[RMDB]
RNA sequence: GGGAACGACUCGAGUAGAGUCGAAAAGUAGUAUUGAUAUGUUCAAAGGUCUGCGAAAAAAAGUAGAAUUUACGUACAAUGCUCAAAUUGUUACGAAUGCUUGGCUUAAAAUGUAUGAGCUGCUAAAUACCAUGAAUUUUAAUAAUACAUCUCAGGCCUAUAAAUCCUUUUUCGAAAGGAUUUAUAGAAAAGAAACAACAACAACAAC
Reactivity to DMS in 0.01 (KOAc 150mM, MgCl2 10mM, bicine 150mM(pH8.5), 24C), signal-to-noise 2, nucleotides 027 to 156: g030u000a070g010u010a050u000u000g000a190u010a040u000g030u000u000c040a070a060a070g040g030u000c010u000g000c030g000a000a000a090a130a190a170a300g020u000a020g000a070a080u000u010u010a050c040g010u000a060c010a050a010u000g020c050u000c070a100a150a130u010u000g010u010u010a300c020g000a090a090u000g020c020u000u020g010g030c090u000u000a080a020a060a030u030g010u000a040u000g000a100g050c050u000g020c090u010a100a060a080u020a050c010c050a080u010g010a050a080u000u000u020u020a030a130u000a140a090u000a050c010a060u000c030u000c050a010g010g000c090
Reactivity to 2A3 in 0.01 (KOAc 150mM, MgCl2 10mM, bicine 150mM(pH8.5), 24C), signal-to-noise 2, nucleotides 027 to 156: g040u080a020g010u000a050u090u030g090a150u030a030u180g030u010u100c050a090a120a050g060g030u000c030u070g030c060g020a100a000a000a000a090a150a050g020u020a010g060a060a080u130u110u030a050c010g000u000a010c000a020a000u030g020c060u030c170a030a090a250u020u030g040u070u110a050c000g080a090a010u080g000c050u090u090g030g000c000u020u040a060a100a060a070u110g050u050a040u080g020a030g030c020u000g000c010u040a180a100a020u100a100c020c010a020u020g060a030a030u120u130u130u010a040a060u130a040a050u100a020c030a070u040c010u000c050a020g030g000c000
Conditions: 150 mM KOAc, 10 mM MgCl2 and 150 mM bicine (pH 8.5), 24 C. Chemical mapping of a 207-nucleotide RNA with DMS and 2A3. Values cover nucleotides 27 to 156. High DMS reactivity at an A or C suggests that its Watson-Crick edge is free. The data come from the RNA Mapping Database (RMDB), library OK3TST. For DMS the reverse transcriptase was MarathonRT.